[RMDB]
This 177-nucleotide RNA was probed chemically with 2A3 and DMS. Reactivities are given for positions 27 through 126. For DMS, 1,348 sequencing reads were counted. 2A3 adducts were read by reverse transcription with SuperScript II with manganese. DMS (dimethyl sulfate) methylates the pairing face of unpaired adenines and cytosines. Conditions: 150 mM KOAc, 10 mM MgCl2 and 150 mM bicine (pH 8.5), 24 C. The 2A3 profile rests on 620 reads.
RNA sequence: GGGAACGACUCGAGUAGAGUCGAAAACUGGACUUUGCCGCAAGGCAGAGUGGUAGAAGAGCGUUGCAUGCGCGUCGAAGGGCGAUGGCGACUGACCCUGGAGCACAUGCAAGUGAGUAUGCAGACAGGAGGAUGCCAAAUUCGUUUGGCAUCCUCCAAAAGAAACAACAACAACAAC
Reactivity to 2A3 in 0.01 (KOAc 150mM, MgCl2 10mM, bicine 150mM(pH8.5), 24C), signal-to-noise 2, nucleotides 027 to 126: c000u010g000g180a010c000u000u000u000g000c010c030g060c070a050a030g010g000c000a000g010a000g000u030g120g010u280a100g090a240a090g040a030g040c100g030u030u000g010c000a020u010g020c000g000c060g270u300c090g010a110a030g040g000g000c040g020a030u050g070g070c030g000a020c090u030g180a150c000c000c000u000g000g000a000g000c000a010c000a030u030g000c000a010a010g090u010g000a030g010u070a050u190g070c080a000g090a290c010a000
Reactivity to DMS in 0.01 (KOAc 150mM, MgCl2 10mM, bicine 150mM(pH8.5), 24C), signal-to-noise 2, nucleotides 027 to 126: c040u010g060g000a040c040u010u000u000g000c020c000g000c300a030a080g000g000c000a030g030a010g000u000g000g000u020a220g020a070a060g000a190g000c070g010u000u000g000c000a040u000g010c000g010c000g000u000c230g030a300a120g000g000g000c090g000a160u000g060g000c250g130a180c020u000g000a230c300c000c000u000g000g000a090g000c030a000c000a000u040g000c020a000a010g000u000g000a110g000u000a040u000g000c040a070g000a130c240a100

Source: RMDB library RFM100, as collected in RNAgym.